[RMDB]
The data come from the RNA Mapping Database (RMDB), library M2PK50. Structure probing data (DMS and 2A3) for a 177-nucleotide construct.
RNA sequence: GGGAACGACUCGAGUAGAGUCGAAAAGUUACACGCUUCGGCGUGUAACAAAUACUCUAACGGUCGCGGAAACGAGAGGACACUCUAGGAGGCAUCCAUGCAAAACCCAUUGCUUCGGCAAUGGGAACGUAAUAAAACUCUUCGGAGUUUUAUUACGAAAAGAAACAACAACAACAAC
Reactivity to DMS in 0.01 (KOAc 150mM, MgCl2 10mM, bicine 150mM(pH8.5), 24C), signal-to-noise 4, nucleotides 027 to 126: g000u010u000a000c000a020c000g020c000u000u010c210g030g010c010g020u000g010u000a000a010c010a040a100a120u000a040c020u000c010u010a040a070c070g010g010u000c010g000c050g010g010a060a100a090c080g010a050g010a060g000g000a100c160a050c050u010c040u000a100g000g010a050g000g000c080a040u000c030c070a060u010g020c150a050a040a100a130c010c000c000a000u000u000g010c000u000u010c180g010g020c000a010a000u000g010g010g010a020a010
Reactivity to 2A3 in 0.01 (KOAc 150mM, MgCl2 10mM, bicine 150mM(pH8.5), 24C), signal-to-noise 3, nucleotides 027 to 126: g010u000u000a000c000a010c000g010c010u020u060c160g080g010c000g000u000g000u000a000a000c010a000a000a000u020a000c000u000c010u010a040a000c020g020g000u020c010g010c040g100g060a080a100a030c060g000a040g000a020g090g050a030c020a020c100u060c050u050a080g050g040a020g090g000c020a030u020c050c010a030u110g030c040a030a040a100a160c000c000c000a000u010u000g000c000u020u050c190g070g000c000a000a000u000g000g000g000a010a000
For 2A3, 7,148 sequencing reads were counted. 2A3 adducts were read by reverse transcription with SuperScript II with manganese. Conditions: 150 mM KOAc, 10 mM MgCl2 and 150 mM bicine (pH 8.5), 24 C.